[RMDB]
RNA sequence: GGGAACGACUCGAGUAGAGUCGAAAAGGCGCAAUUAUUAUUUACCCAGCUAUUCUUAUAUUGCCACCAUUAAUAGGUAUACCUGCGUAUAGUGCAUAUAUUGCUUCGGGACUUACCUCUAGUCAAGUACAAUUUACUCGUUCGCGAGUAAAUUGUAAAAAGAAACAACAACAACAAC
Reactivity to DMS in 0.01 (KOAc 150mM, MgCl2 10mM, bicine 150mM(pH8.5), 24C), signal-to-noise 3, nucleotides 027 to 126: g000g000c230g010c000a050a060u010u020a030u020u030a080u010u010u000a070c000c040c010a110g010c120u020a020u010u010c020u040u000a050u020a100u020u010g000c040c020a080c100c020a040u010u050a060a100u040a050g010g010u010a040u020a030c060c020u010g000c270g010u000a030u000a070g010u030g000c110a060u020a030u030a040u000u020g010c020u040u000c100g000g000g000a060c080u000u000a060c100c010u000c100u010a060g000u020c050a080a090g010
Reactivity to 2A3 in 0.01 (KOAc 150mM, MgCl2 10mM, bicine 150mM(pH8.5), 24C), signal-to-noise 6, nucleotides 027 to 126: g040g000c040g010c060a040a040u070u040a040u100u020a080u100u250u130a100c030c020c020a030g000c020u050a120u120u070c040u140u120a080u030a080u180u130g050c030c040a040c000c020a080u100u170a130a110u090a130g050g010u020a020u040a050c010c030u050g010c010g020u010a040u050a090g110u120g080c090a000u050a010u020a030u100u250g010c000u040u090c010g000g000g120a070c020u020u030a030c010c000u000c050u060a070g050u070c030a110a010g060
An RNA of 177 nucleotides, treated with DMS and 2A3 and read out base by base.
The data come from the RNA Mapping Database (RMDB), library OK1LIB.
The reactions ran in a buffer of 150 mM KOAc, 10 mM MgCl2 and 150 mM bicine (pH 8.5), at 24 C.